[RMDB]
RNA sequence: GGGAACGACUCGAGUAGAGUCGAAAAGAUAUGGAAAUCCGUCUUUUGACGUGCGGACCGGAUCGGAAACGAUCCGAAGCACGAUAAGACGUGAUUUCCUAAGUCAAAAUCCUAGUUCGCUAGGAAAGCUCAUAUUUGUCUUCGGACAAAUAUGAGCAAAAGAAACAACAACAACAAC
Reactivity to DMS in 0.01 (KOAc 150mM, MgCl2 10mM, bicine 150mM(pH8.5), 24C), signal-to-noise 2, nucleotides 027 to 126: g000a010u000a300u000g010g000a030a010a050u000c010c000g010u000c000u000u010u010u000g030a120c090g020u000g000c010g050g020a250c290c020g060g030a010u000c000g030g010a100a080a300c000g030a000u010c000c000g040a040a200g010c000a010c000g000a110u060a040a000g010a000c000g000u020g030a000u010u000u000c010c000u000a000a090g000u010c020a160a060a170a160u000c000c000u000a020g050u010u000c240g080c020u000a000g000g000a060a090a090
Reactivity to 2A3 in 0.01 (KOAc 150mM, MgCl2 10mM, bicine 150mM(pH8.5), 24C), signal-to-noise 1, nucleotides 027 to 126: g000a020u090a070u110g000g020a010a000a000u000c000c000g000u060c010u080u150u040u180g300a190c040g000u000g000c030g040g110a100c180c030g000g000a000u030c000g000g070a050a040a080c010g000a000u000c010c000g000a020a020g000c010a010c010g000a000u080a080a010g010a000c000g000u040g000a000u000u000u050c000c000u010a020a000g000u000c000a000a030a000a300u080c010c000u000a010g010u070u110c300g000c190u020a010g000g000a100a150a000